The record gives the reactivity of an RNA of 177 nucleotides to DMS and 2A3. The reactions ran in a buffer of 150 mM KOAc, 10 mM MgCl2 and 150 mM bicine (pH 8.5), at 24 C. The data come from the RNA Mapping Database (RMDB), library OK2TST. For 2A3, 2,485 sequencing reads were counted. The DMS profile rests on 2,198 reads.

RNA sequence: GGGAACGACUCGAGUAGAGUCGAAAAAAAGCGCGCCAUCGCCUUCCACGAGGCCGGGCACGCCGUGACCGCCGCGUGAUUCCGGGCAGCGACAAGCUGCAAAAGGUCAGCAUCAUCCCGCGUGGCCCGCUCCCAUACAAUUCGUUGUAUGGGAGCGAAAAGAAACAACAACAACAAC
Reactivity to DMS in 0.01 (KOAc 150mM, MgCl2 10mM, bicine 150mM(pH8.5), 24C), signal-to-noise 3, nucleotides 027 to 126: a010a040a070g000c040g000c080g010c020c040a120u000c130g010c000c010u000u000c050c090a120c120g000a110g020g010c020c160g000g000g020c020a020c020g010c040c080g030u000g000a090c050c030g000c040c060g020c090g010u000g000a110u000u000c030c010g000g000g000c030a020g000c000g010a120c150a110a150g000c000u000g010c000a020a040a100a120g000g010u000c030a090g010c070a090u010c120a120u010c020c000c020g000c070g030u000g000g000c180c070
Reactivity to 2A3 in 0.01 (KOAc 150mM, MgCl2 10mM, bicine 150mM(pH8.5), 24C), signal-to-noise 2, nucleotides 027 to 126: a020a010a000g030c040g000c020g010c010c030a200u200c080g000c010c010u060u000c040c010a020c030g040a030g050g030c070c040g030g030g020c010a010c010g050c010c060g050u050g040a070c010c030g010c020c020g020c020g020u060g040a120u230u040c020c010g010g070g010c000a010g020c000g100a200c130a120a030g030c010u000g000c010a080a080a050a050g000g010u050c000a010g070c000a020u060c000a050u000c000c000c000g010c040g010u040g020g000c000c040